Record summary:
Source: RMDB library M2PK90, as collected in RNAgym. Chemical mapping of a 177-nucleotide RNA with DMS and 2A3.
RNA sequence: GGGAACGACUCGAGUAGAGUCGAAAAAUACAGUACGAAAGUACAAAGAAGCAAUCAAACCGAGCAGUGAAAUGAUGGCUUCAGUCCAUAAUGGGCAAACACUGCAGACGGAGCCAAAGGCAAAUAACUGCUACUAUAUAUUCGUAUAUAGUAGCAGAAAAGAAACAACAACAACAAC
Reactivity to DMS in 0.01 (KOAc 150mM, MgCl2 10mM, bicine 150mM(pH8.5), 24C), signal-to-noise 5, nucleotides 027 to 126: a070u010a090c130a140g010u000a010c010g010a150a080a120g020u010a000c010a060a110a120g020a030a030g010c040a070a040u010c060a080a100a160c050c030g010a070g010c030a030g020u000g010a120a090a080u010g000a030u000g000g010c020u000u000c050a090g010u000c000c010a090u000a090a100u000g010g020g010c050a100a070a110c040a020c020u010g000c000a070g000a140c070g010g010a140g000c050c030a020a060a090g010g010c060a050a090a060u010a070a120
Reactivity to 2A3 in 0.01 (KOAc 150mM, MgCl2 10mM, bicine 150mM(pH8.5), 24C), signal-to-noise 5, nucleotides 027 to 126: a000u150a020c050a020g010u000a010c020g030a110a030a040g020u010a010c020a010a080a010g040a040a010g010c040a010a080u090c030a080a040a100c010c010g020a020g010c010a010g020u030g070a080a090a190u130g060a020u050g060g000c010u090u060c060a030g010u000c010c000a030u110a260a100u300g000g010g030c000a010a010a010c030a000c020u020g000c010a010g040a040c030g020g010a020g020c010c020a070a120a060g050g010c040a060a040a050u090a090a090
For 2A3, 8,139 sequencing reads were counted.
For 2A3 the reverse transcriptase was SuperScript II with manganese.
The RNA was probed in 150 mM KOAc, 10 mM MgCl2 and 150 mM bicine (pH 8.5) at 24 C.